The record gives the reactivity of an RNA of 207 nucleotides to 2A3 and DMS. For 2A3 the reverse transcriptase was SuperScript II with manganese. For 2A3, 788 sequencing reads were counted. 2A3 is a SHAPE reagent: it acylates the 2'-hydroxyl of flexible nucleotides of all four kinds. For DMS the reverse transcriptase was MarathonRT.

RNA sequence: GGGAACGACUCGAGUAGAGUCGAAAACGCGAGAAGUUCGACGAAGCAAUGCGGGGUAUGUGAUGGUAACUGACGAAGAUAUGCAACAGCUUGACGAGGAUUAUUUAGCGGUAAGCAAGUGGGUGGCACGCCGCAAUCAGUUGAAAGCCUACGUUAAAGUCAGAACGAAAUUCGUUUCGUUCUGACUAAAAGAAACAACAACAACAAC
Reactivity to 2A3 in 0.01 (KOAc 150mM, MgCl2 10mM, bicine 150mM(pH8.5), 24C), signal-to-noise 2, nucleotides 027 to 156: c040g020c010g000a080g020a120a030g050u080u000c020g000a020c030g120a160a020g040c040a030a060u100g020c010g000g030g000g050u060a040u140g100u100g030a060u040g000g030u060a010a050c070u080g020a030c050g000a040a000g000a030u140a040u190g010c000a060a040c000a020g020c010u040u070g000a010c000g030a040g020g000a000u030u040a090u160u160u060a070g000c010g050g000u060a090a000g000c030a000a040g030u010g020g060g020u020g050g000c030a020c090g010c000c000g000c060a010a130u030c020a000g080u020u000g010a130a060a000g030c000c010u030a080c060g040u080u150a060a030
Reactivity to DMS in 0.01 (KOAc 150mM, MgCl2 10mM, bicine 150mM(pH8.5), 24C), signal-to-noise 1, nucleotides 027 to 156: c050g000c040g010a110g010a120a220g000u010u000c040g030a150c030g000a240a170g040c030a140a010u000g040c000g000g000g010g000u000a070u000g010u000g010a070u000g030g010u010a090a090c020u000g000a130c060g000a120a130g010a180u000a070u020g030c040a130a090c040a110g040c000u000u000g000a130c000g000a070g000g000a040u130u000a160u000u000u000a120g000c070g000g000u000a080a080g070c020a040a070g010u000g000g030g040u000g020g000c040a100c070g070c060c000g030c010a090a030u010c080a030g010u000u000g000a090a080a020g010c040c020u000a040c070g000u000u000a080a060